The record gives the reactivity of an RNA of 177 nucleotides to 2A3 and DMS.
It was measured as part of the RMDB library OK1LIB.
For DMS the reverse transcriptase was MarathonRT.
Values are in units of 0.01, from 0 to 300, in steps of 10.
The DMS profile rests on 54,054 reads.
RNA sequence: GGGAACGACUCGAGUAGAGUCGAAAAGAGAUCCUGGAUAGCAGAAUGAGGUGUCACGGUCUCUGUUAUUUGGGAUCAGAACGACGGGUAGAUUAGAUUGUGAUACCUCAUGUCUAUCGGUCGUAUAGUAACAGUUUGUAUUCGUACAAGCUGUUACAAAAGAAACAACAACAACAAC
Reactivity to 2A3 in 0.01 (KOAc 150mM, MgCl2 10mM, bicine 150mM(pH8.5), 24C), signal-to-noise 9, nucleotides 027 to 126: g130a000g000a000u010c000c000u000g010g010a000u000a000g000c010a000g010a100a030u010g000a000g010g010u070g060u070c030a000c030g040g010u010c030u000c020u040g010u010u000a020u010u010u010g020g000g000a000u020c010a000g080a040a010c020g020a000c030g040g000g000u010a010g000a050u080u020a010g020a040u010u050g020u030g070a040u040a030c000c000u000c000a010u050g010u000c000u000a010u000c010g070g010u010c010g010u030a060u070a080
Reactivity to DMS in 0.01 (KOAc 150mM, MgCl2 10mM, bicine 150mM(pH8.5), 24C), signal-to-noise 9, nucleotides 027 to 126: g010a120g010a030u000c000c000u000g010g010a000u000a010g010c080a050g010a270a040u000g010a010g000g010u010g010u020c110a120c040g010g010u000c020u000c020u000g000u010u000a020u000u000u000g010g010g010a080u010c040a050g010a070a040c050g000a010c010g000g000g000u010a010g000a080u020u030a080g010a020u010u010g010u010g000a120u010a050c000c010u000c010a040u000g000u010c010u000a010u000c000g010g010u000c020g020u010a050u010a090
Background
In probing experiments dimethyl sulfate is read out at A N1 and C N3, which are open when not base-paired.